[RMDB]
This 207-nucleotide RNA was probed chemically with 2A3 and DMS. As a SHAPE reagent, 2A3 marks flexible, mostly unpaired nucleotides at the ribose 2'-OH. For 2A3, 2,269 sequencing reads were counted. The DMS profile rests on 2,007 reads. DMS adducts were read by reverse transcription with MarathonRT. It was measured as part of the RMDB library OK3TST.
RNA sequence: GGGAACGACUCGAGUAGAGUCGAAAAUCAAAUGGUAUUUCUGGUUCUAGAUCCUUGAGGAAUCGCCACACUGUCUUCCACAAUGGUUGAACUAAUUUACACUCCCACCAACAGUGUAAAAGCAUUCCUAUUUCUCCACAUCCUCUCCAGCAUAAUACUCGUAAGGAUGUUUCGACAUCCUUACGAGAAAAGAAACAACAACAACAAC
Reactivity to 2A3 in 0.01 (KOAc 150mM, MgCl2 10mM, bicine 150mM(pH8.5), 24C), signal-to-noise 3, nucleotides 027 to 156: u120c020a030a060a080u070g040g000u050a110u020u110u080c110u030g020g020u040u000c030u020a030g020a080u010c030c000u020u080g020a010g010g020a060a010u030c070g020c090c000a030c010a010c070u020g020u050c030u080u010c060c020a080c080a130a180u150g020g000u020u080g050a110a030c020u040a060a140u050u030u030a030c050a020c010u050c030c050c000a040c010c000a020a060c030a020g010u010g030u030a020a040a020a020g020c000a030u050u030c000c010u030a040u000u050u030c040u020c000c010a070c000a050u050c010c000u020c000u000c010c000a020g000c020a030u080a100a060u080a220
Reactivity to DMS in 0.01 (KOAc 150mM, MgCl2 10mM, bicine 150mM(pH8.5), 24C), signal-to-noise 1, nucleotides 027 to 156: u010c070a070a110a050u000g080g020u000a060u000u000u000c010u000g030g040u000u010c020u010a150g010a040u000c000c020u030u000g050a130g020g000a120a080u000c060g000c030c020a040c020a080c030u000g020u000c020u020u000c050c020a080c080a040a120u020g030g070u000u000g010a080a130c040u000a050a090u000u000u000a080c050a090c040u010c010c020c030a100c120c110a090a160c010a030g040u010g020u000a010a010a020a050g020c030a120u010u000c020c010u000a190u010u000u010c010u010c020c040a100c040a050u000c010c010u010c040u000c060c000a040g050c040a090u000a070a080u000a160